[RMDB]
RNA sequence: GGGAACGACUCGAGUAGAGUCGAAAAGUAACCCUCCUGACCAUGCCGUUCUUGAGGUUUUGGCGACGCCAGUACGUGAGGCGUUACUGGCGCGUUUCGGUCAACAUCAAGGGUCUGUUGUACCGGCGGAUAGGGGAUCAUUCGUGAUCCCCUAUCCAAAAGAAACAACAACAACAAC
Reactivity to 2A3 in 0.01 (KOAc 150mM, MgCl2 10mM, bicine 150mM(pH8.5), 24C), signal-to-noise 2, nucleotides 027 to 126: g040u030a080a140c000c000c010u010c000c020u060g000a010c000c020a120u180g000c000c000g160u160u140c050u050u040g060a070g030g000u030u070u040u120g040g020c030g050a070c020g000c000c000a000g000u010a000c010g020u070g300a120g260g110c000g020u010u020a030c000u000g040g000c000g070c040g020u020u080u100c080g050g020u020c040a020a020c050a080u100c030a020a050g050g020g000u080c080u040g020u060u010g010u050a010c010c000g070g020c080
Reactivity to DMS in 0.01 (KOAc 150mM, MgCl2 10mM, bicine 150mM(pH8.5), 24C), signal-to-noise 2, nucleotides 027 to 126: g030u010a120a150c030c010c010u020c030c020u000g030a050c000c000a070u010g020c020c040g010u010u000c060u000u000g000a070g020g010u000u000u010u000g010g000c000g020a080c010g010c000c000a030g010u000a010c050g010u010g020a180g030g000c040g020u000u010a010c000u000g000g000c010g010c040g010u000u010u020c070g040g010u000c020a040a000c030a090u000c030a080a020g030g010g010u010c040u000g000u010u000g010u020a090c120c000g010g050c280
Conditions: 150 mM KOAc, 10 mM MgCl2 and 150 mM bicine (pH 8.5), 24 C. Chemical mapping of a 177-nucleotide RNA with 2A3 and DMS. For DMS, 2,363 sequencing reads were counted. Reactivities are given for positions 27 through 126.